[RMDB]
RNA sequence: GGGAACGACUCGAGUAGAGUCGAAAAAAAACGCUGGGACAGUAGAUGAGGAACUUAAGACAGGUGACUGAAGCGCGCACGGUCACCAAUGACGAGUUCUACCCACCAUCAGGCUGUCCUGUGCUGAAGCGCGCACGGCAACCGAAAGGUGCGAAAAUCAUUGAGUAAUGUUCGCAUUACUCAAUGAAAAAGAAACAACAACAACAAC
Reactivity to 2A3 in 0.01 (KOAc 150mM, MgCl2 10mM, bicine 150mM(pH8.5), 24C), signal-to-noise 2, nucleotides 027 to 156: a000a000a000a000c020g010c010u010g000g000g000a000c000a000g010u020a040g000a000u000g000a010g020g000a000a000c000u050u000a200a030g190a170c050a060g020g010u010g000a010c000u020g020a160a040g010c000g000c000g000c000a010c020g010g010u010c020a000c010c010a070a300u030g000a000c010g000a000g000u000u010c010u030a070c080c090c030a030c000c000a000u000c010a030g300g060c000u000g000u000c000c000u010g000u000g000c000u000g020a150a040g000c000g000c000g000c000a000c000g000g010c000a010a000c000c000g030a080a040a020g010g000u010g010c010g050a090a030a010a080
Reactivity to DMS in 0.01 (KOAc 150mM, MgCl2 10mM, bicine 150mM(pH8.5), 24C), signal-to-noise 1, nucleotides 027 to 156: a080a050a020a080c020g040c010u000g000g000g020a080c000a060g060u000a170g000a090u000g020a300g010g000a000a020c060u000u040a000a130g050a140c000a010g000g040u000g000a020c010u010g020a010a010g050c050g000c000g000c030a300c040g010g040u010c000a020c010c010a070a010u010g010a050c070g000a040g050u000u000c010u000a060c000c020c030a300c030c020a040u020c020a170g000g030c000u000g000u000c000c000u000g010u000g010c040u000g020a070a110g000c070g120c060g000c000a160c030g000g000c020a060a050c040c010g020a140a090a160g020g010u000g000c000g010a030a070a130a130